[RMDB]
RNA sequence: GGGAACGACUCGAGUAGAGUCGAAAAUCUUCAAGGGAACAUUACCUCUUGCUUCUGUAUGACAGAACCUGAUGUAGCUUCAAGUGAUGCCACGAAUAUUGAAUGCAGCAUCCAACGAGAUGAAGAUAGCUAUGUAAUUAACGGCAAAAAAUGGUGAGUGGAUAAAUAGGUUCGCCUAUUUAUCCACAAAAGAAACAACAACAACAAC
Reactivity to DMS in 0.01 (KOAc 150mM, MgCl2 10mM, bicine 150mM(pH8.5), 24C), signal-to-noise 2, nucleotides 027 to 156: u020c050u000u000c030a080a090g020g000g030a130a130c070a120u010u000a090c020c000u000c020u000u000g030c040u010u010c000u010g020u000a100u010g030a110c060a100g000a270a120c010c020u020g010a100u010g010u000a120g010c060u010u000c050a060a150g010u020g020a110u010g010c030c020a080c040g000a160a100u000a200u010u000g010a090a150u000g020c010a140g020c000a040u010c020c020a070a110c070g010a200g000a090u010g010a080a120g000a100u000a060g030c020u000a070u010g030u010a030a110u020u000a050a150c070g010g040c030a000a020a020a070a040a080u000g000g000u000g000a160
Reactivity to 2A3 in 0.01 (KOAc 150mM, MgCl2 10mM, bicine 150mM(pH8.5), 24C), signal-to-noise 5, nucleotides 027 to 156: u050c020u110u100c060a030a030g040g000g020a060a080c020a120u080u090a060c050c030u030c000u010u080g080c060u050u030c020u020g090u100a170u220g110a070c020a010g020a050a040c010c020u030g000a020u070g010u050a010g010c020u020u020c050a130a060g030u060g170a020u030g010c000c020a080c090g070a080a060u140a140u200u200g040a060a070u100g020c020a000g000c020a010u000c010c000a080a080c070g090a040g010a150u090g030a050a030g030a080u030a030g020c010u040a010u140g010u030a030a050u070u090a050a020c040g060g040c050a000a020a030a110a020a070u180g000g040u060g050a030

The record gives the reactivity of an RNA of 207 nucleotides to DMS and 2A3. For DMS the reverse transcriptase was MarathonRT. The 2A3 profile rests on 2,751 reads.